[RMDB]
RNA sequence: GGGAACGACUCGAGUAGAGUCGAAAAGCUAGUCGGAGACGACUAGCAACGAUCAGUUCGCUGAUCGGAAGGUGCAUUCAAAUACGCUAGAAGCACCAAUAUCCGACGCGUAGCGUAAAACUGAGAAAGCAGAUAACAAAAAUAAAAAGGCGUCGCGGUCCUAAUAUUUAUUCGUAAAUAUUAGGACAAAAGAAACAACAACAACAAC
Reactivity to DMS in 0.01 (KOAc 150mM, MgCl2 10mM, bicine 150mM(pH8.5), 24C), signal-to-noise 2, nucleotides 027 to 156: g020c000u000a000g040u020c010g000g000a300g010a300c010g020a040c000u000a020g030c000a020a030c020g060a000u000c020a030g000u000u000c300g010c020u000g040a000u000c000g010g010a060a120g010g010u010g000c040a170u000u000c020a040a080a180u010a020c000g010c000u010a140g010a050a080g010c000a020c010c000a140a060u000a070u000c050c000g040a040c060g020c070g000u000a030g000c000g000u000a060a020a090a140c030u000g010a120g010a230a080a130g000c030a070g000a190u000a130a230c070a030a090a070a080a210u000a050a070a080a160a170g000g040c040g010u000c000g090c060g030
Reactivity to 2A3 in 0.01 (KOAc 150mM, MgCl2 10mM, bicine 150mM(pH8.5), 24C), signal-to-noise 4, nucleotides 027 to 156: g020c000u000a000g010u000c000g010g020a060g000a090c000g000a000c010u000a000g000c000a000a000c010g000a030u010c000a010g040u060u090c130g030c060u000g010a060u000c000g000g050a070a060g000g000u030g030c140a300u000u080c020a030a060a100u090a040c020g000c020u030a020g010a030a000g010c010a000c000c000a020a000u160a050u040c020c010g000a000c000g020c010g050u080a030g010c000g010u040a000a020a110a130c020u030g000a020g120a170a120a020g110c070a010g030a070u160a130a090c090a070a100a100a040a000u230a080a100a040a020a000g040g010c010g000u000c010g030c080g030